[RMDB]
RNA sequence: GGGAACGACUCGAGUAGAGUCGAAAAAGGGCGACCGAUGAGCGUCAAGCAUACGACGCGAUACUCACUCGACAAUCAACUGUCGGUGCUCCCCGACGAUACCGGACUCCCGCGACACGCCGAACAUCGAUUUCGGGAACGGACACCGCAUGACCGCCAAUGACUACGGAUUCGUCCGUAGUCAUUGAAAAGAAACAACAACAACAAC
Reactivity to 2A3 in 0.01 (KOAc 150mM, MgCl2 10mM, bicine 150mM(pH8.5), 24C), signal-to-noise 4, nucleotides 027 to 156: a010g060g010g000c060g010a090c020c010g030a080u130g060a030g010c020g010u010c030a030a100g120c080a170u150a210c140g000a000c010g010c000g000a020u070a030c030u030c040a020c010u070c040g030a010c050a040a110u110c040a070a090c060u080g050u120c040g000g010u020g020c020u010c010c000c020c000g010a010c010g030a050u040a080c040c000g060g000a070c010u020c030c040c010g060c050g030a030c060a010c150g000c010c010g030a050a050c020a120u060c050g080a090u060u110u070c020g040g000g000a060a090c040g000g020a010c010a020c020c030g030c040a040u060g080a080c020c020g000c040
Reactivity to DMS in 0.01 (KOAc 150mM, MgCl2 10mM, bicine 150mM(pH8.5), 24C), signal-to-noise 2, nucleotides 027 to 156: a110g060g050g000c070g000a130c080c010g060a060u000g020a200g000c030g020u000c000a150a160g020c090a240u000a200c100g030a050c030g030c060g010a170u000a090c060u010c010a060c020u000c000g020a120c030a080a210u000c110a040a060c110u000g010u000c000g010g000u010g000c020u030c040c010c010c010g010a100c070g020a110u000a070c020c060g020g000a060c080u000c010c050c020g000c090g000a120c030a040c080g020c020c020g000a060a210c130a060u000c030g000a150u010u000u000c100g000g000g010a060a080c060g000g010a240c020a050c010c010g000c050a110u000g010a140c010c020g020c070

The record gives the reactivity of an RNA of 207 nucleotides to 2A3 and DMS.
The reactions ran in a buffer of 150 mM KOAc, 10 mM MgCl2 and 150 mM bicine (pH 8.5), at 24 C.
It was measured as part of the RMDB library OK3TST.
For 2A3, 2,631 sequencing reads were counted.
High DMS reactivity at an A or C suggests that its Watson-Crick edge is free.
2A3 adducts were read by reverse transcription with SuperScript II with manganese.